[RMDB]
RNA sequence: GGGAACGACUCGAGUAGAGUCGAAAAGUCCCCAGUAUGACGUUAAACUGCUGACUCAUACAUACUGACACCGGUUGCUCAACAGGCUGUGUGGGACAAUAGAAUAACAAGGCUGUCAGUUUGAGCUAAAACUCCUCGGGGUUCGCCCCGAGGAGAAGUUAUUUCAAGCGUUCGCGCUUGAAAUAACAAAAGAAACAACAACAACAAC
Reactivity to 2A3 in 0.01 (KOAc 150mM, MgCl2 10mM, bicine 150mM(pH8.5), 24C), signal-to-noise 1, nucleotides 027 to 156: g010u020c030c000c080c000a000g010u030a000u120g000a010c050g000u010u000a020a000a000c000u050g030c000u020g000a000c000u020c050a020u200a270c010a020u200a050c080u000g010a010c020a010c000c020g100g000u000u000g020c020u000c050a080a110c090a110g270g040c190u150g010u080g040u080g160g020g020a000c000a050a010u200a090g110a010a020u170a120a010c030a100a100g040g020c110u010g000u020c000a000g000u000u000u090g010a010g010c000u040a100a190a050a050c000u000c010c000u000c000g010g010g000g070u020u100c200g040c010c010c000c000g000a000g000g000a000g010a000a000